[RMDB]
RNA sequence: GGGAACGACUCGAGUAGAGUCGAAAAGGUGAUUGUGAUACUCGCUACUGUCAUUCAUCGAAUGACAGUAUUAGUCUGCUACAAUCACAUUACGUGACUCAAUUAUUUAGCAGACUAAUUGAUAACAUAACGCGAGAUAUGUUAAAGUCACGUAUCGCUAAUACGGCUCGUUCGCGAGCCGUAUUAGAAAAGAAACAACAACAACAAC
Reactivity to 2A3 in 0.01 (KOAc 150mM, MgCl2 10mM, bicine 150mM(pH8.5), 24C), signal-to-noise 4, nucleotides 027 to 156: g100g010u000g000a000u010u000g010u010g000a000u000a020c000u000c010g000c000u010a010c000u000g010u000c000a000u000u010c040a110u140c220g020a000a000u000g000a000c000a000g000u010a000u000u000a000g000u000c000u010g010c010u020a000c000a000a000u000c000a000c000a010u050u100a000c000g000u000g030a000c020u010c090a120a210u120u080a120u180u230u090a040g010c000a000g000a000c000u000a000a000u010u040g050a040u060a180a050c040a050u090a060a030c110g000c000g010a000g030a050u020a000u020g050u020u090a190a130a020g000u010c000a010c000g000u020a050u080c050g000
Reactivity to DMS in 0.01 (KOAc 150mM, MgCl2 10mM, bicine 150mM(pH8.5), 24C), signal-to-noise 2, nucleotides 027 to 156: g010g040u020g000a010u010u010g000u020g040a100u000a100c000u020c040g070c020u010a090c010u000g010u010c000a010u010u010c000a210u010c220g000a050a010u000g000a030c000a040g030u000a000u000u000a020g000u000c010u020g030c010u000a030c040a030a020u000c010a020c010a160u000u000a020c030g020u020g030a010c030u000c050a070a160u030u010a170u000u000u000a030g010c000a040g000a050c020u010a010a000u000u040g020a140u000a070a180c140a110u000a040a200c090g000c020g030a070g020a090u000a020u010g020u000u010a080a080a080g000u010c000a010c020g010u000a030u000c110g040

Description
This 207-nucleotide RNA was probed chemically with 2A3 and DMS. Reactivities are given for positions 27 through 156. It was measured as part of the RMDB library OK3TST. For DMS, 3,570 sequencing reads were counted. Conditions: 150 mM KOAc, 10 mM MgCl2 and 150 mM bicine (pH 8.5), 24 C. The 2A3 profile rests on 3,277 reads. 2A3 adducts were read by reverse transcription with SuperScript II with manganese.